Overview
This 177-nucleotide RNA was probed chemically with DMS. The RNA was probed in 150 mM KOAc, 10 mM MgCl2 and 150 mM bicine (pH 8.5) at 24 C. Source: RMDB library 15KREP, as collected in RNAgym.

RNA sequence: GGGAACGACUCGAGUAGAGUCGAAAACUGUUCUGCACGCAUGGUUUGGAGAGAGUGGUGCAAUGUCUGUGGCAUAAAAGAUGUUGUUCUACAAGGCUUAAAAGCUUGUUGUUACGUGGGUGUGCAAUCCACUUCUGUAGUUCGCUACAGAAGUGGAAAAAGAAACAACAACAACAAC
Reactivity to DMS in 0.01 (KOAc 150mM, MgCl2 10mM, bicine 150mM(pH8.5), 24C), signal-to-noise 2, nucleotides 027 to 126: c050u010g020u020u000c040u000g000c040a070c120g010c060a070u000g010g010u000u010u000g010g000a100g000a120g000a120g030u000g020g010u000g010c030a030a030u000g020u020c050u000g000u000g010g010c090a110u000a050a090a090a050g010a040u010g010u000u000g000u000u000c050u030a060c100a060a070g010g000c000u000u010a090a050a080a130g000c010u000u000g000u000u000g010u000u000a000c190g000u000g000g010g040u000g000u000g010c090a050a200